[RMDB]
RNA sequence: GGGAACGACUCGAGUAGAGUCGAAAAGGCAGAGAGGUAGUGCGGUGCUUUGGUGUGGUGUUGACGGUGCGGGCUUCCGCAUGCCAUGCAGGGGCAUGAUCAAUAUCAUAGUCUCAUCAAAUAGCCGCUCGUGCUGAGAAUUCGUUCUCAGCACGAGAAAAGAAACAACAACAACAAC
Reactivity to DMS in 0.01 (KOAc 150mM, MgCl2 10mM, bicine 150mM(pH8.5), 24C), signal-to-noise 1, nucleotides 027 to 126: g000g020c020a060g030a090g010a080g020g020u000a050g020u000g000c050g030g020u000g020c110u010u010u020g020g000u000g030u000g000g000u020g010u000u000g020a070c120g000g000u010g030c060g010g000g020c210u020u030c050c020g020c010a050u000g000c040c030a060u000g000c150a100g000g000g000g000c010a030u000g030a080u000c140a040a060u000a090u000c020a030u010a110g000u000c050u020c020a100u010c050a020a100a070u000a120g010c040c040g000

Source information: Chemical mapping of a 177-nucleotide RNA with DMS. The RNA was probed in 150 mM KOAc, 10 mM MgCl2 and 150 mM bicine (pH 8.5) at 24 C. It was measured as part of the RMDB library OK2TST.